[RMDB]
RNA sequence: GGGAACGACUCGAGUAGAGUCGAAAACAAACAAAAUGUAUCUGGCUGAUGCUUCUGAUGCAACUCGCUGUAAAGCUUUUCCGACCACCCUGUCGAAAGCAGCGAUGAAGUGGUUAACAAAACAAAACGCACUAGAUGACUUCGGUCAUCUAGUGCGAAAAGAAACAACAACAACAAC
Reactivity to 2A3 in 0.01 (KOAc 150mM, MgCl2 10mM, bicine 150mM(pH8.5), 24C), signal-to-noise 1, nucleotides 027 to 126: c020a040a020a030c010a110a100a000a130u270g000u000a000u120c070u000g110g000c000u050g080a010u250g030c000u000u040c000u000g020a000u020g000c080a070a030c000u000c070g000c000u060g000u260a060a060a060g020c000u050u000u030u000c080c180g000a000c000c000a000c000c000c000u010g000u010c000g010a020a020a020g000c020a000g000c000g010a030u040g120a000a150g120u120g000g000u050u000a300a030c090a030a120a000a000c000a040a180a040a000